RNA sequence: GGGAACGACUCGAGUAGAGUCGAAAACAUUUGCGUUGCUCGAGGCGCAACCGAUACCGCCAAAGAGCCCGCCGCCCGAAGGCGCCCGCGUGCGCAUGAAAAAAGGCCUUCAUCUGGCGAUGAAGGCCUUAGAUAUCCACUUCGGUGGAUAUCUAAGAAAAGAAACAACAACAACAAC
Reactivity to 2A3 in 0.01 (KOAc 150mM, MgCl2 10mM, bicine 150mM(pH8.5), 24C), signal-to-noise 1, nucleotides 027 to 126: c030a070u100u120u220g060c030g030u010u110g000c000u000c060g040a070g030g000c010g010c040a030a000c010c000g120a070u100a030c000c050g010c000c020a010a180a070g020a010g010c000c010c050g030c000c000g010c000c000c000g020a050a030g060g000c000g000c000c000c000g220c100g000u150g020c000g010c010a040u110g170a010a080a070a020a020a040g160g000c000c000u080u000c030a020u010c050u190g170g010c120g050a000u010g000a000a000g000g000c000
Reactivity to DMS in 0.01 (KOAc 150mM, MgCl2 10mM, bicine 150mM(pH8.5), 24C), signal-to-noise 8, nucleotides 027 to 126: c110a120u020u020u020g010c020g010u010u020g020c010u000c010g000a300g000g000c010g000c130a100a110c150c100g000a110u020a070c300c020g000c010c010a020a170a170g000a050g020c010c300c010g010c010c210g010c010c010c040g010a090a100g010g000c020g010c020c000c270g030c240g000u020g010c010g000c020a030u010g000a000a050a060a060a080a030g000g010c010c000u000u000c000a010u000c020u020g040g010c290g000a030u010g000a020a010g000g010c010